This 177-nucleotide RNA was probed chemically with 2A3 and DMS. It was measured as part of the RMDB library TTRDEL. For DMS the reverse transcriptase was MarathonRT. The DMS profile rests on 1,702 reads. The 2A3 profile rests on 3,404 reads. The RNA was probed in 150 mM KOAc, 10 mM MgCl2 and 150 mM bicine (pH 8.5) at 24 C.
RNA sequence: GGGAACGACUCGAGUAGAGUCGAAAAGAUAUGGAUCCCGACAACAGCGACCCAUCGGAAACGAUGGUGUCGACAUGUUGGGAUCCUAAGUCAAACGAAGGAAGAGUGUUCGCACUCUUCCUUCGAAGUGCAUGUGAUGGUUCGCCAUCACAUGCACAAAAGAAACAACAACAACAAC
Reactivity to 2A3 in 0.01 (KOAc 150mM, MgCl2 10mM, bicine 150mM(pH8.5), 24C), signal-to-noise 1, nucleotides 027 to 126: g010a000u030a010u060g020g000a010u000c010c030c000g000a000c020a220a030c060a090g080c000g010a010c000c010c000a020u010c020g020g010a010a020a010c010g000a000u010g000g040u030g020u000c000g020a170c070a050u020g010u010u010g000g000g000a010u000c000c000u000a000a000g010u000c010a060a040a090c020g010a010a000g000g010a020a010g000a030g020u030g020u090u190c300g040c090a010c000u030c010u000u000c000c000u020u010c000g000a000a010
Reactivity to DMS in 0.01 (KOAc 150mM, MgCl2 10mM, bicine 150mM(pH8.5), 24C), signal-to-noise 2, nucleotides 027 to 126: g010a050u000a210u000g010g000a010u000c000c000c010g000a020c000a010a120c300a170g010c020g030a020c000c010c000a040u000c000g020g000a040a050a070c000g000a020u000g010g000u020g020u000c000g010a040c150a080u020g010u000u000g000g000g010a010u000c000c010u000a000a020g010u000c020a110a070a270c030g010a020a010g020g000a010a000g020a010g040u000g020u000u030c210g010c010a010c010u000c000u010u000c000c000u000u010c000g010a010a040